[RMDB]
RNA sequence: GGGAACGACUCGAGUAGAGUCGAAAACUUCAUUCUACACCGCCUAACUGGAUGUAGAGUCUGGAAAAUGGGACACUAACUUUCAGGGCUUGGUCUAGGAAUCUGCUCCCACGAGCAACAUCAGUUAUGACUCUAGAGGAAGCUGCAGAAGUAAGGGCCUAGUGACUCUUUUCGAAGAGUCACUAGGAAAAGAAACAACAACAACAAC
Reactivity to 2A3 in 0.01 (KOAc 150mM, MgCl2 10mM, bicine 150mM(pH8.5), 24C), signal-to-noise 2, nucleotides 027 to 156: c030u110u070c000a100u090u110c000u000a000c000a000c030c020g090c060c010u140a150a090c060u080g010g000a070u030g000u030a020g010a060g030u000c050u020g020g100a120a070a160a140u110g090g040g010a040c060a040c110u100a230a130c040u100u030u110c110a030g010g010g010c030u100u140g000g080u020c030u030a040g000g050a110a100u000c010u040g010c020u020c000c030c000a090c130g030a030g040c030a020a080c000a070u150c020a020g050u090u110a120u180g070a130c000u050c040u100a060g000a050g110g030a090a050g000c040u040g000c030a000g020a090a000g000u050a000a140g040g000g030